[RMDB]
RNA sequence: GGGAACGACUCGAGUAGAGUCGAAAAGCUUCCUCUUGGCGCGGAGGUUUAACUGCGCUCGCUCCCCAUAUCGGUGUGGGCGCACCGGAUUUACAAAUCAAAGUCCUUUAGGGAGCGGAAAGGGACAAAAACUUGCACGUGUUCGCACGUGCAAGAAGUGUGCAUUAGUGUUCGCACUAAUGCACACAAAAGAAACAACAACAACAAC
Reactivity to 2A3 in 0.01 (KOAc 150mM, MgCl2 10mM, bicine 150mM(pH8.5), 24C), signal-to-noise 1, nucleotides 027 to 156: g030c070u180u080c000c000u050c010u030u000g030g010c000g000c030g000g000a010g000g000u060u210u120a020a000c020u030g000c000g000c000u000c000g000c000u000c010c020c000c000a010u050a110u100c000g010g040u000g010u000g000g000g000c020g020c000a000c010c010g010g000a000u210u160u100a170c300a110a050a000u060c010a020a080a010g000u000c000c000u000u060u080a000g000g000g000a010g020c030g010g020a030a060a000g050g000g030a030c070a040a090a010a010a090c020u010u010g000c000a000c000g000u000g000u020u000c060g030c140a000c000g020u030g000c000a000a000g000a000a030
Structure probing data (2A3) for a 207-nucleotide construct. Conditions: 150 mM KOAc, 10 mM MgCl2 and 150 mM bicine (pH 8.5), 24 C. Reactivities are given for positions 27 through 156.